[RMDB]
RNA sequence: GGGAACGACUCGAGUAGAGUCGAAAACAGUCUGCGGCCUGAGUAAUAGCGCUGACCACGGCAAUGCUGCCGACGCCGGUCGCCAGUACCGCCGGAGCGCGUUCAAGGCUGAUGCCGCCAAUUGCCAAUGGAGUAUAUGGUUCGCCAUAUACUCCAUAAAAGAAACAACAACAACAAC
Reactivity to 2A3 in 0.01 (KOAc 150mM, MgCl2 10mM, bicine 150mM(pH8.5), 24C), signal-to-noise 8, nucleotides 027 to 126: c020a020g060u030c060u100g020c010g010g000c010c010u060g060a050g050u170a050a130u060a140g000c010g020c050u090g090a140c070c050a110c050g000g000c010a040a170u200g020c020u010g040c080c000g010a000c010g170c130c040g220g010u000c000g020c030c000a020g010u020a050c030c080g000c000c030g020g020a030g010c010g000c010g020u080u090c060a090a010g050g000c000u010g030a010u050g010c000c000g020c000c030a060a120u110u110g100c040c010a030
Reactivity to DMS in 0.01 (KOAc 150mM, MgCl2 10mM, bicine 150mM(pH8.5), 24C), signal-to-noise 7, nucleotides 027 to 126: c070a040g000u020c080u010g000c020g000g000c020c020u000g000a090g000u040a080a090u040a070g020c010g000c000u010g020a100c140c160a160c010g000g000c020a080a300u030g000c020u000g020c300c000g010a010c020g010c180c300g020g010u000c010g020c290c000a010g010u000a020c200c190g000c000c000g010g000a100g010c020g010c010g000u000u010c070a100a140g010g000c010u000g010a070u010g010c000c010g000c040c110a050a070u020u020g010c030c030a130